[RMDB]
RNA sequence: GGGAACGACUCGAGUAGAGUCGAAAAUGAAGACUUGGAUGUCUCUGGACCUUGGACCUAGUGACAUGUAGGUGGUUCUCGACCAUUUGUUUAGUAAGAUGUGCAAUCCCAAGCCAGAAUUACUAAGGGUUAUCUCGGUAUUCGUACCGAGAUAACCAAAAGAAACAACAACAACAAC
Reactivity to DMS in 0.01 (KOAc 150mM, MgCl2 10mM, bicine 150mM(pH8.5), 24C), signal-to-noise 2, nucleotides 027 to 126: u000g000a090a070g000a070c020u000u010g000g010a040u000g010u000c010u000c000u000g010g000a100c040c090u000u010g000g040a150c030c060u000a050g030u000g020a070c040a030u010g020u010a020g010g030u000g010g010u000u000c020u000c170g010a100c090c070a070u000u000u000g010u000u000u000a010g000u000a010a020g010a190u000g000u020g010c000a020a150u000c010c010c010a140a080g000c000c010a030g000a220a160u010u000a040c020u000a040a090g020
Reactivity to 2A3 in 0.01 (KOAc 150mM, MgCl2 10mM, bicine 150mM(pH8.5), 24C), signal-to-noise 2, nucleotides 027 to 126: u150g050a090a020g040a020c050u050u100g100g070a010u050g080u010c000u000c000u030g050g010a070c010c000u060u150g150g020a060c000c000u020a040g010u000g100a050c020a090u140g170u250a030g050g040u060g000g080u080u040c040u040c070g150a150c020c000a070u140u090u300g070u000u180u000a020g030u010a000a000g000a040u030g070u060g000c000a030a080u000c020c020c010a000a000g000c020c000a080g000a130a050u070u010a020c010u020a030a050g040